[RMDB]
RNA sequence: GGGAACGACUCGAGUAGAGUCGAAAAGAAAAGAGAAGUCAAUGAUGGUUUCAUCUAACAUUGUCUGAACCUGUCUGACGCAUCUCAAUGAUGCAGUGUUUGUGGUUUCUGAGACUUCUCUGUAUAAAGCGUAUUCAGGUUUCGACCUGAAUACGCUAAAAGAAACAACAACAACAAC
Reactivity to 2A3 in 0.01 (KOAc 150mM, MgCl2 10mM, bicine 150mM(pH8.5), 24C), signal-to-noise 3, nucleotides 027 to 126: g010a000a060a010a000g000a000g000a000a000g000u010c030a040a060u190g030a040u000g010g140u110u140u200c020a070u080c050u090a070a060c100a090u120u130g060u050c020u100g000a010a020c020c050u090g150u050c040u060g040a080c080g000c010a020u020c020u030c100a100a090u300g020a000u010g010c010a030g140u030g040u070u060u110g090u040g000g070u000u110u050c020u000g040a050g000a010c000u000u000c000u000c000u000g000u000a050u080a040a080
Reactivity to DMS in 0.01 (KOAc 150mM, MgCl2 10mM, bicine 150mM(pH8.5), 24C), signal-to-noise 1, nucleotides 027 to 126: g010a170a130a050a000g000a010g000a030a000g000u000c000a150a130u060g000a050u000g010g000u010u000u000c110a030u010c020u010a100a070c240a010u030u000g010u080c150u030g000a060a050c040c000u000g000u000c050u010g000a180c060g000c010a000u000c000u000c270a060a170u050g010a030u000g010c000a150g010u000g050u000u000u000g000u000g010g000u010u000u000c040u000g010a190g000a000c000u000u000c000u000c000u000g000u020a070u040a060a090